[RMDB]
RNA sequence: GGGAACGACUCGAGUAGAGUCGAAAAACGUGCCCACCACAUCUUCAACUGCUCCUGUUAGUGUAUAAAUCAGAAGGAUAGGUAAACCGAGAUCUCUAGAGAAGAGGCUACCUGGCACUGCUGACGGAAUGCUAGCCAGGUUCGCCUGGCUAGCAUUAAAAGAAACAACAACAACAAC
Reactivity to DMS in 0.01 (KOAc 150mM, MgCl2 10mM, bicine 150mM(pH8.5), 24C), signal-to-noise 1, nucleotides 027 to 126: a240c170g050u050g000c020c040c040a040c110c060a060c060a030u000c050u000u000c100a140a110c050u010g000c070u000c000c000u000g010u010u000a080g020u000g050u010a040u000a040a030a130u000c050a050g010a050a040g000g000a100u000a010g000g000u010a050a090a050c020c040g000a110g000a070u000c040u000c070u000a080g000a140g010a110a080g010a090g000g000c010u010a010c020c030u010g000g020c110a110c010u000g010c020u000g020a080c150g050g000